Notes: Conditions: 150 mM KOAc, 10 mM MgCl2 and 150 mM bicine (pH 8.5), 24 C. Structure probing data (DMS and 2A3) for a 177-nucleotide construct. DMS adducts were read by reverse transcription with MarathonRT. 2A3 adducts were read by reverse transcription with SuperScript II with manganese.
[RMDB]
RNA sequence: GGGAACGACUCGAGUAGAGUCGAAAAUGCCUCUGCAUCGACGCUUAAGCACAAAAAGGGAUAUCAUCCCGUUCGCAAGACCAAUGGGGAAAUGAUAAAAUUUUUAAAUGAAAUGAGUAGAAUUUGGCUCCAGUAGUGCAUUCGUGCACUACUGGAGAAAAGAAACAACAACAACAAC
Reactivity to DMS in 0.01 (KOAc 150mM, MgCl2 10mM, bicine 150mM(pH8.5), 24C), signal-to-noise 1, nucleotides 027 to 126: u000g000c000c000u000c000u010g030c000a120u000c000g000a060c300g000c020u000u090a090a110g000c170a040c120a180a090a010a090a010g000g050g030a190u000a120u000c190a000u000c000c010c000g000u000u000c250g000c050a170a020g000a180c110c000a050a050u000g000g040g000g010a010a110a140u070g000a050u120a000a040a100a170u000u100u000u000u000a020a040a130u020g000a070a050a110u000g000a130g000u060a000g000a090a100u000u000u000g000g000
Reactivity to 2A3 in 0.01 (KOAc 150mM, MgCl2 10mM, bicine 150mM(pH8.5), 24C), signal-to-noise 2, nucleotides 027 to 126: u200g110c060c000u000c000u060g010c050a130u120c010g080a040c040g000c190u110u260a130a000g140c050a030c050a070a040a050a050a000g180g000g000a060u000a100u110c030a010u000c000c000c000g000u080u020c060g000c060a000a090g070a130c060c060a000a000u080g080g090g060g110a210a100a000u070g000a000u020a200a110a080a080u050u000u270u200u130a030a010a120u060g040a010a000a210u080g000a030g000u050a000g180a170a100u020u020u000g090g020
The 2A3 profile rests on 612 reads.